[RMDB]
RNA sequence: GGGAACGACUCGAGUAGAGUCGAAAAGAGAGCUGCUUCGGCAGCUCUCCGUCAGGUAGUUCCUAUCUCAUUUACCUGUAGUGGCCAACGUCCGGAUAGGAAGAGAGCCCUGCUUCGGCAGGGCUAAGUAAUAUGUGUUAUUCGUAACACAUAUUACAAAAGAAACAACAACAACAAC
Reactivity to 2A3 in 0.01 (KOAc 150mM, MgCl2 10mM, bicine 150mM(pH8.5), 24C), signal-to-noise 8, nucleotides 027 to 126: g000a000g010a010g000c020u030g000c020u070u090c290g120g010c020a000g010c000u010c000u010c000c000g040u020c010a010g000g030u040a020g050u050u030c010c000u010a020u000c050u020c030a200u090u090u070a030c010c000u030g040u110a110g110u090g130g030c020c020a060a040c080g100u050c050c040g040g010a010u010a010g020g020a030a010g070a010g010a000g010c000c000c010u000g010c000u020u060c190g080g000c000a000g020g000g000c000u000a010a000
Reactivity to DMS in 0.01 (KOAc 150mM, MgCl2 10mM, bicine 150mM(pH8.5), 24C), signal-to-noise 9, nucleotides 027 to 126: g000a010g010a010g020c000u000g010c010u000u010c190g030g020c000a010g010c000u000c000u000c000c020g000u000c030a020g000g010u000a050g010u010u000c010c000u000a020u000c010u010c110a130u000u000u000a020c010c000u000g010u000a080g020u000g010g010c030c030a110a110c220g010u010c160c110g000g000a020u000a020g000g010a080a110g010a150g000a050g000c000c000c000u000g010c000u000u010c200g030g010c000a010g000g000g000c000u000a000a040